[RMDB]
RNA sequence: GGGAACGACUCGAGUAGAGUCGAAAAGUUUAUCAAUUCGAUUCCCACGCUUCAUUAGAGUUCGGUCAGACAAAGGACCAGAGGACGCAUCCACGAAUUCAAUAUUGGCUGACAUGUAUAUGAAACAACUUAAUACUUGAUGUUCGUGAUGAACUCACGGCACGUAUUAUUUCGAUAAUACGUGCCGAAAAGAAACAACAACAACAAC
Reactivity to DMS in 0.01 (KOAc 150mM, MgCl2 10mM, bicine 150mM(pH8.5), 24C), signal-to-noise 2, nucleotides 027 to 156: g010u000u000u000a100u020c100a090a230u020u000c030g010a210u010u000c010c000c030a170c130g040c060u020u000c070a110u010u000a120g030a060g000u000u000c000g010g030u000c030a160g050a090c050a080a150a170g000g010a050c020c010a150g000a130g020g020a130c130g020c080a040u000c010c020a040c020g000a020a080u020u000c030a010a040u000a020u000u000g010g010c030u000g000a230c050a000u000g000u000a140u000a090u010g020a130a100a070c020a010a030c020u000u000a030a080u000a000c100u000u000g000a020u000g030u000u000c030g020u000g030a120u000g000a070a140c020u000c000a110
Reactivity to 2A3 in 0.01 (KOAc 150mM, MgCl2 10mM, bicine 150mM(pH8.5), 24C), signal-to-noise 6, nucleotides 027 to 156: g030u100u120u150a240u180c060a110a090u190u080c050g090a050u030u020c010c020c020a030c040g070c040u160u140c080a200u120u280a060g040a040g050u050u090c060g060g000u010c040a040g020a240c120a120a150a090g130g010a020c000c020a020g010a030g050g020a020c070g000c070a010u020c080c020a030c020g020a010a030u020u020c000a000a030u020a020u060u030g060g000c040u030g050a070c030a090u050g110u170a120u070a030u240g120a140a090a020c020a030a000c030u130u290a050a040u040a080c060u040u020g010a050u090g070u050u010c010g000u010g020a020u060g010a010a020c010u000c050a040